[RMDB]
RNA sequence: GGGAACGACUCGAGUAGAGUCGAAAAGGAACCGGAUGUGAUCACGUUGUUGCAGUACCAGAUGGCAUCUUAAAUCCGAUCUGCAAAUAAGCAUGUAGAAAGCUGAUGUGGGCUUUAGCUGGACGGGGGAAUACAGGCAACUUCGGUUGCCUGUAAAUGUUAAGGCAUGUUUCGACAUGCCUUAACAAAAAGAAACAACAACAACAAC
Reactivity to DMS in 0.01 (KOAc 150mM, MgCl2 10mM, bicine 150mM(pH8.5), 24C), signal-to-noise 1, nucleotides 027 to 156: g000g030a190a140c000c080g010g010a090u010g020u020g000a070u000c110a090c180g080u000u000g020u000u000g010c030a040g020u000a140c050c010a150g010a140u000g020g060c060a050u000c070u000u000a060a150a060u020c030c000g000a110u000c020u020g000c040a050a050a060u000a090a100g010c000a060u030g000u010a090g010a030a120a110g010c080u010g000a060u010g030u000g030g010g000c050u000u000u000a120g000c000u000g010g010a100c030g040g000g010g040g040a060a180u000a010c000a020g000g000c000a000a000c010u010u010c240g040g010u000u000g060c010c010u000g010u010a000a020a090
The record gives the reactivity of an RNA of 207 nucleotides to DMS.
For DMS the reverse transcriptase was MarathonRT.
Source: RMDB library M2RFPK, as collected in RNAgym.